This 177-nucleotide RNA was probed chemically with DMS and 2A3. Source: RMDB library TTRDES, as collected in RNAgym. DMS (dimethyl sulfate) methylates the pairing face of unpaired adenines and cytosines. For DMS the reverse transcriptase was MarathonRT.
RNA sequence: GGGAACGACUCGAGUAGAGUCGAAAAGAUAUGGAGAUGCGAGGACAUGCUAGUGGUUCGGAAACGAACCAAUAGCAACAGCCUCCCAUCUCCUAAGUCAAAACGGAUACUGUUCGCAGUAUCCGAACCCCUUAUCAACGUUCGCGUUGAUAAGGGGAAAAGAAACAACAACAACAAC
Reactivity to DMS in 0.01 (KOAc 150mM, MgCl2 10mM, bicine 150mM(pH8.5), 24C), signal-to-noise 2, nucleotides 027 to 126: g030a030u000a090u030g010g010a030g000a000u000g020c300g000a010g000g020a020c160a120u030g000c000u000a020g020u000g000g010u000u040c010g010g000a010a000a020c000g000a050a000c010c000a000a000u000a000g010c000a060a030c230a110g000c010c000u000c000c080c010a010u000c000u000c000c000u000a000a060g000u000c010a090a060a160a230c050g000g000a000u000a010c000u010g010u000u000c210g020c010a000g000u000a000u000c010c000g030a020a050
Reactivity to 2A3 in 0.01 (KOAc 150mM, MgCl2 10mM, bicine 150mM(pH8.5), 24C), signal-to-noise 2, nucleotides 027 to 126: g010a000u010a000u030g000g000a020g010a000u000g000c010g050a010g000g020a040c120a210u300g000c000u010a000g040u000g010g000u000u020c010g000g010a000a000a000c000g000a010a000c010c030a000a000u010a010g000c010a060a060c070a070g000c000c000u000c020c000c020a010u000c000u000c000c000u000a010a010g000u010c010a030a060a080a130c030g000g000a020u020a000c010u020g060u070u150c300g000c180a010g000u000a000u000c000c000g010a000a010